RNA sequence: GGGAACGACUCGAGUAGAGUCGAAAAGUUCUCUUGGCCUUCCGGAGCCUUCUCUCGAGAUCGUCCGCAUCCUUUCUUGCCUGCACCCACUUUUCGAGGAUGUCUUCCCUUCCUCCCCUCCGGGAUUAUGGCUCUCAGUUCGCUGAGAGCAAAAGAAACAACAACAACAAC
Reactivity to DMS in 0.01 (KOAc 150mM, MgCl2 10mM, bicine 150mM(pH8.5), 24C), signal-to-noise 8, nucleotides 027 to 129: g000u040u030c040u000c050u050u030g000g010c070c060u020u020c060c060g000g010a140g020c170c050u020u020c040u030c030u000c030g030a050g030a110u020c040g010u030c030c030g050c140a140u020c040c000u020u020u020c030u000u000g000c030c010u000g000c120a080c030c020c040a090c050u000u000u000u000c070g020a050g020g000a090u000g000u020c010u000u000c000c000c000u020u040c020c040u020c010c000c010c000u030c020c030g010g020g000a080u030u020a060u000g000
Reactivity to 2A3 in 0.01 (KOAc 150mM, MgCl2 10mM, bicine 150mM(pH8.5), 24C), signal-to-noise 9, nucleotides 027 to 129: g020u060u010c020u010c010u040u090g030g000c010c000u070u050c050c040g040g010a020g020c010c010u100u060c040u000c000u000c010g050a060g040a270u010c010g020u020c000c020g030c050a120u090c010c020u060u090u050c020u050u070g040c000c000u030g030c020a070c010c030c000a060c020u040u080u060u080c040g010a030g070g030a060u100g020u010c030u010u040c000c000c000u010u030c000c000u020c000c010c000c000u000c010c010g020g000g010a040u100u070a120u200g090

The data come from the RNA Mapping Database (RMDB), library 15KLIB.
An RNA of 170 nucleotides, treated with DMS and 2A3 and read out base by base.
2A3 adducts were read by reverse transcription with SuperScript II with manganese.
The 2A3 profile rests on 52,714 reads.
Values are in units of 0.01, from 0 to 300, in steps of 10.